[RMDB]
RNA sequence: GGGAACGACUCGAGUAGAGUCGAAAAUGUGGCGUCCAUUGGCUAACCCUAGCACACUGCAAGUGAGCGCCUUUAUGGACAACUCACCGCAAGGCUUUGGUUUGAUGCAGCGUGAGCGCGAUUACGAGCUGAUUAAUCGAUUCGUCGAUUAAUCAGCAAAAGAAACAACAACAACAAC
Reactivity to DMS in 0.01 (KOAc 150mM, MgCl2 10mM, bicine 150mM(pH8.5), 24C), signal-to-noise 6, nucleotides 027 to 126: u010g020u010g010g010c060g020u000c010c030a040u000u010g010g010c030u000a100a060c040c010c020u010a070g020c010a070c050a300c140u000g000c080a060a130g010u000g010a020g030c210g020c010c010u000u010u020a080u000g010g000a050c050a080a130c020u000c010a020c010c080g020c020a050a100g000g000c020u000u000u000g010g000u000u000u000g000a120u020g000c040a070g010c090g000u000g010a080g020c030g020c030g010a070u010u020a070c140g010a140
Reactivity to 2A3 in 0.01 (KOAc 150mM, MgCl2 10mM, bicine 150mM(pH8.5), 24C), signal-to-noise 4, nucleotides 027 to 126: u140g000u010g080g040c040g020u010c020c000a040u020u130g050g020c020u020a030a060c000c010c020u010a010g020c010a030c010a020c130u070g020c030a110a110g010u010g040a020g030c040g010c010c000u030u110u040a160u130g000g000a010c020a040a060c050u020c010a000c010c040g000c020a040a020g010g010c000u050u100u120g060g030u060u070u090g090a080u120g030c030a030g030c030g040u030g040a050g000c030g010c020g030a030u070u070a050c090g030a040